[RMDB]
The record gives the reactivity of an RNA of 177 nucleotides to 2A3 and DMS. The RNA was probed in 150 mM KOAc, 10 mM MgCl2 and 150 mM bicine (pH 8.5) at 24 C. DMS adducts were read by reverse transcription with MarathonRT.
RNA sequence: GGGAACGACUCGAGUAGAGUCGAAAAGAUAUGGACAGGAGCAACAGCUACCCAUCGGAAACGAUGGCGUAGACAUGCUCCAGUCCUAAGUCAAACUCAUUCUUGGAGUUCGCUCCAAGAAUGAGAAGAGAGUAGUCAACUUCGGUUGACUACUCUCAAAAGAAACAACAACAACAAC
Reactivity to 2A3 in 0.01 (KOAc 150mM, MgCl2 10mM, bicine 150mM(pH8.5), 24C), signal-to-noise 2, nucleotides 027 to 126: g000a020u040a020u050g000g000a020c060a070g020g040a000g020c010a000a200c050a180g060c040u010a020c020c000c000a010u010c020g000g010a050a020a000c000g000a000u000g020g030c060g030u000a000g040a080c030a050u030g000c000u000c000c000a000g000u000c010c000u020a030a020g040u000c030a000a030a140c000u020c000a010u020u010c000u010u010g000g010a020g000u030u140c250g100c110u000c020c000a000a000g000a000a000u000g000a000g000a030a010
Reactivity to DMS in 0.01 (KOAc 150mM, MgCl2 10mM, bicine 150mM(pH8.5), 24C), signal-to-noise 2, nucleotides 027 to 126: g000a030u010a240u000g000g010a010c000a080g000g000a000g010c000a020a040c300a130g000c000u000a000c000c000c000a010u000c010g020g010a070a070a140c000g010a030u000g000g010c300g020u000a000g020a050c010a120u000g000c010u000c000c000a020g000u000c000c000u000a000a060g000u000c010a110a120a140c000u000c000a020u000u000c000u000u000g020g010a050g020u010u000c300g020c000u000c000c000a000a000g000a010a000u000g000a000g000a070a030